[RMDB]
Structure probing data (DMS and 2A3) for a 207-nucleotide construct. The DMS profile rests on 4,938 reads. Source: RMDB library M2RFPK, as collected in RNAgym. For DMS the reverse transcriptase was MarathonRT. For 2A3, 4,104 sequencing reads were counted.
RNA sequence: GGGAACGACUCGAGUAGAGUCGAAAAUAAGCAAAAGACAACCACCUUUCCCGCUGACAAUAGCGUUAUCCCUCUGAACUUCGGUAAUAUGAGGGCACAGUAAAUCCCGCAAGGAUGAGAAUGUGAUUAAACAGUUACAGCUUCGGCUGUAACUGAAGAUAAGUGCGUAGUUCGCUACGCACUUAUCAAAAGAAACAACAACAACAAC
Reactivity to DMS in 0.01 (KOAc 150mM, MgCl2 10mM, bicine 150mM(pH8.5), 24C), signal-to-noise 3, nucleotides 027 to 156: u010a040a120g030c060a050a050a090a090g010a090c040a130a120c010c010a130c050c060u000u010u000c000c030c010g030c070u010g010a100c080a120a100u000a080g000c040g020u010u000a150u000c000c000c010u000c030u000g010a060a060c030u000u000c250g070g020u000a050a260u040a180u000g010a040g000g010g010c070a050c020a040g000u000a060a090a110u000c000c000c030g030c150a100a160g000g020a050u000g010a100g020a070a140u000g010u000g000a110u010u000a070a130a150c020a030g000u000u000a010c000a010g000c000u010u010c300g060g020c000u000g000u000a000a000c010u000g000a030a010
Reactivity to 2A3 in 0.01 (KOAc 150mM, MgCl2 10mM, bicine 150mM(pH8.5), 24C), signal-to-noise 5, nucleotides 027 to 156: u140a020a010g070c080a050a060a070a050g130a110c080a070a040c030c040a070c020c030u030u050u030c000c020c010g000c050u040g050a060c050a120a180u080a140g050c020g040u080u080a070u110c000c000c000u000c010u010g010a010a020c010u040u100c220g050g000u030a010a010u070a030u250g000a000g000g010g000c010a000c000a000g010u020a000a030a030u010c020c010c000g110c110a030a030g000g000a010u000g000a010g030a030a010u010g020u000g000a010u090u230a100a130a010c020a000g000u000u000a000c000a000g010c000u050u100c160g090g000c000u000g010u000a000a000c000u000g000a020a000